Record summary: This 177-nucleotide RNA was probed chemically with 2A3 and DMS. For 2A3 the reverse transcriptase was SuperScript II with manganese. It was measured as part of the RMDB library 15KREP.
RNA sequence: GGGAACGACUCGAGUAGAGUCGAAAAACCCCUUCAGCGAACAGAGGAGUCUCUACCUCGGAGGAGAAAGACCGUAGCGAUGGGGGAGAUGCUAGGAGUAGGCGGCGACCGAAGCGAGGAGGAAAGCGUGUUUAUUCAUGUUCGCAUGAAUAAACACAAAAGAAACAACAACAACAAC
Reactivity to 2A3 in 0.01 (KOAc 150mM, MgCl2 10mM, bicine 150mM(pH8.5), 24C), signal-to-noise 2, nucleotides 027 to 126: a000c000c020c000c000u020u070c020a060g000c010g040a040a020c010a050g020a030g070g020a030g050u000c020u000c030u100a130c030c010u020c030g010g070a060g020g030a020g060a010a110a000g100a020c020c030g020u080a010g050c020g060a080u080g000g030g000g040g000a030g010a010u110g020c060u080a020g020g030a070g030u060a030g050g030c010g010g010c030g020a050c000c000g010a040a010g000c020g000a000g000g000a010g000g080a070a010a010g070c080
Reactivity to DMS in 0.01 (KOAc 150mM, MgCl2 10mM, bicine 150mM(pH8.5), 24C), signal-to-noise 2, nucleotides 027 to 126: a100c010c010c000c080u000u000c050a130g020c010g000a070a110c100a150g000a030g000g010a160g010u010c050u010c050u000a180c050c030u020c070g000g040a170g000g000a040g010a060a090a060g020a060c030c040g020u020a070g010c070g020a050u000g010g000g010g010g000a060g000a060u000g000c040u000a060g030g020a070g020u000a070g010g010c060g000g000c060g000a070c060c000g000a070a090g000c060g010a070g020g000a020g040g000a090a090a120g000c170